[RMDB]
RNA sequence: GGGAACGACUCGAGUAGAGUCGAAAAUAAAGACAUACCCAACACUGGGUAAUUUAUAAUAAAGGAAAAGAGGUUUAAUGGACUCACAGCUCUGCGUGGCUAGGGAGGCCUCACAAUCAUGGCAGAAGGCAAAAGGCAAGUCUUACACUGUGGCAAACUAAUGCGAUAUGUUCGCAUAUCGCAUUAGAAAAGAAACAACAACAACAAC
Reactivity to DMS in 0.01 (KOAc 150mM, MgCl2 10mM, bicine 150mM(pH8.5), 24C), signal-to-noise 2, nucleotides 027 to 156: u010a090a080a140g020a130c040a120u010a040c010c000c000a110a190c150a150c160u000g030g000g050u000a000a050u000u000u000a090u000a030a100u000a050a090a060g000g000a060a060a070a110g000a070g000g030u010u000u000a130a080u000g000g010a050c000u000c010a070c010a070g030c030u020c050u010g040c210g040u040g000g000c020u000a050g020g020g020a070g000g010c020c030u020c150a040c080a080a070u010c060a110u000g010g030c010a060g020a010a040g000g010c010a010a000a060a050g020g010c050a050a160g020u000c030u000u000a070c070a100c060u000g010u000g050g000c030a060a130a160
Reactivity to 2A3 in 0.01 (KOAc 150mM, MgCl2 10mM, bicine 150mM(pH8.5), 24C), signal-to-noise 4, nucleotides 027 to 156: u090a000a050a010g070a010c020a050u070a020c000c010c000a100a040c090a090c160u050g000g000g010u020a040a040u060u080u090a090u030a090a060u080a090a040a040g000g020a020a010a060a040g040a030g010g050u040u080u170a050a100u160g040g030a030c010u010c030a030c020a030g010c020u030c030u180g120c110g140u220g000g000c010u010a040g050g020g030a000g000g020c010c010u020c000a060c060a020a070u170c060a030u090g010g000c000a000g000a000a020g000g000c000a000a020a000a000g000g000c020a030a000g010u000c000u030u060a040c080a020c110u070g010u040g080g010c030a050a020a040

The record gives the reactivity of an RNA of 207 nucleotides to DMS and 2A3. For DMS the reverse transcriptase was MarathonRT. For 2A3 the reverse transcriptase was SuperScript II with manganese. Conditions: 150 mM KOAc, 10 mM MgCl2 and 150 mM bicine (pH 8.5), 24 C. The DMS profile rests on 3,218 reads. Source: RMDB library OK3TST, as collected in RNAgym.